[RMDB]
RNA sequence: GGGAACGACUCGAGUAGAGUCGAAAAUCUUCGCCGCCGCGCUCGCGAGCUGUUGAAGCUCCCCGACUGAGCGUCUCUUCUAUUUUUUAUCUUGCAGCGACCGACCAUGCAACGUCGAUAGAUGAAGCAUGAACGCACAAUUCGUUGUGCGUUCAUGAAAAGAAACAACAACAACAAC
Reactivity to 2A3 in 0.01 (KOAc 150mM, MgCl2 10mM, bicine 150mM(pH8.5), 24C), signal-to-noise 1, nucleotides 027 to 126: u010c010u040u060c050g020c010c000g030c010c030g030c030g000c000u080c120g050c070g020a030g040c030u020g010u190u240g040a030a020g030c010u000c070c010c010c020g040a060c040u100g050a050g000c000g100u010c010u030c010u070u050c010u030a230u020u230u000u020u100u070a080u010c050u070u080g000c010a050g010c030g050a050c060c020g070a030c000c030a050u110g070c000a070a040c050g000u010c050g050a050u080a060g060a030u060g100a020a000g050
Reactivity to DMS in 0.01 (KOAc 150mM, MgCl2 10mM, bicine 150mM(pH8.5), 24C), signal-to-noise 2, nucleotides 027 to 126: u030c020u000u000c040g020c050c050g000c040c100g000c030g000c070u000c090g020c080g010a050g020c010u010g010u000u000g010a110a070g010c080u000c010c040c020c030g020a130c120u010g010a100g020c030g000u000c080u010c040u010u000c040u000a020u020u000u010u010u030u010a050u000c040u000u010g000c050a070g010c050g030a090c080c040g000a080c080c040a080u010g000c090a030a090c100g000u010c090g010a100u010a030g010a070u000g000a080a160g020